[RMDB]
Structure probing data (DMS and 2A3) for a 177-nucleotide construct. For DMS the reverse transcriptase was MarathonRT. The RNA was probed in 150 mM KOAc, 10 mM MgCl2 and 150 mM bicine (pH 8.5) at 24 C. 2A3 adducts were read by reverse transcription with SuperScript II with manganese. For 2A3, 2,271 sequencing reads were counted.
RNA sequence: GGGAACGACUCGAGUAGAGUCGAAAAAGAUAUGGAGACAGCCGAGAACGAUCAACCAAUGAUGUGAGCUCGGAAACGAGCUCAUUGAGGUUACGUGAUCGUUCGUUUGACGCUGUCUCCUAAGUCACGUCCGCUAUAUGUUCGCAUAUAGCGGACGAAAAGAAACAACAACAACAAC
Reactivity to DMS in 0.01 (KOAc 150mM, MgCl2 10mM, bicine 150mM(pH8.5), 24C), signal-to-noise 2, nucleotides 027 to 126: a060g030a020u010a300u030g010g000a000g000a030c000a030g020c040c010g000a090g000a000a000c000g020a030u000c010a120a070c020c120a110a120u080g000a140u000g000u000g000a000g000c000u020c000g000g000a070a110a240c010g010a000g000c000u000c000a000u000u000g020a250g000g040u010u050a050c300g000u010g000a020u000c000g030u000u000c000g000u000u010u010g020a140c300g000c020u000g000u000c000u000c000c000u000a000a090g000u010c010a190
Reactivity to 2A3 in 0.01 (KOAc 150mM, MgCl2 10mM, bicine 150mM(pH8.5), 24C), signal-to-noise 1, nucleotides 027 to 126: a000g080a050u080a050u200g000g000a010g000a000c000a000g020c000c010g130a060g010a070a000c000g000a010u030c030a010a040c020c020a100a300u110g060a010u090g010u000g060a000g000c020u000c000g000g000a030a000a000c030g000a040g030c050u000c000a010u000u000g000a000g020g020u120u110a100c300g160u200g020a010u010c010g010u020u000c000g000u070u140u220g030a030c040g000c020u000g000u000c000u000c010c000u000a030a000g000u000c000a010